The record gives the reactivity of an RNA of 207 nucleotides to 2A3.
It was measured as part of the RMDB library OK3TST.
Values cover nucleotides 27 to 156.
[RMDB]
RNA sequence: GGGAACGACUCGAGUAGAGUCGAAAACGCAUGCGAGAGCAUGCGGCUAAGCUUCGGCUUAGUAAGCGGAAAUAACCAUCGUAACCGCCCCGGCGUGUCUCGAACCAUGCCGGGAAAAGUCCACAGGGCUAACGGUCCCUGUGCGACAUCGAUGGAAGCUACAUACGUCGUUCGCGACGUAUGUAGCAAAAGAAACAACAACAACAAC
Reactivity to 2A3 in 0.01 (KOAc 150mM, MgCl2 10mM, bicine 150mM(pH8.5), 24C), signal-to-noise 1, nucleotides 027 to 156: c000g000c010a000u010g000c000g030a040g000a010g060c000a010u000g010c000g000g000c000u000a000a000g000c000u010u220c300g040g020c000u000u000a000g000u030a080a060g000c030g020g040a060a090a090u110a110a030c000c000a000u010c010g020u010a080a020c000c000g010c010c000c000c000g010g000c000g040u000g040u080c080u070c240g050a060a040c020c000a000u010g000c000c000g000g000g020a020a000a000a000g000u000c000c000a000c000a000g030g040g020c030u070a200a080c140g010g100u240c000c000c000u010g000u000g020c010g010a000c000a020u090c000g000a000u000g000g000a010a010